[RMDB]
RNA sequence: GGGAACGACUCGAGUAGAGUCGAAAAUUGCCGUGCAUCUGGCCUGUGAAAGCCUGCGCGCAGGCGAAUCCGAUAUGGCGGUUGCCGGCGGCGUGGCGCUCUCUUUCCCCCAGCAGGCGGGCUACCGAAUGCUUAACUGCUUCGGCAGUUAAGCAUUAAAAGAAACAACAACAACAAC
Reactivity to 2A3 in 0.01 (KOAc 150mM, MgCl2 10mM, bicine 150mM(pH8.5), 24C), signal-to-noise 1, nucleotides 027 to 126: u070u050g020c000c000g030u100g040c010a040u000c040u080g070g000c000c000u070g070u000g100a130a040a020g010c010c010u020g030c060g000c010g000c000a010g000g000c040g050a120a080u000c010c030g050a150u110a140u300g050g010c000g020g000u030u050g000c020c020g030g000c010g010g040c030g040u040g050g060c050g040c030u070c030u000c000u080u050u100c000c000c060c010c000a000g000c000a000g030g010c000g010g040g000c010u070a050c040c000g080
Reactivity to DMS in 0.01 (KOAc 150mM, MgCl2 10mM, bicine 150mM(pH8.5), 24C), signal-to-noise 3, nucleotides 027 to 126: u000u000g020c010c010g020u020g020c030a030u000c030u000g010g000c000c000u010g010u020g010a070a060a170g010c000c000u000g010c040g000c110g010c010a010g010g010c000g010a090a090u010c020c010g000a170u010a090u000g010g010c030g000g000u000u000g010c010c010g000g010c010g000g000c060g040u000g010g010c140g000c020u010c040u000c040u000u000u000c020c020c010c150c070a130g020c040a040g010g020c040g000g010g000c070u000a080c090c080g010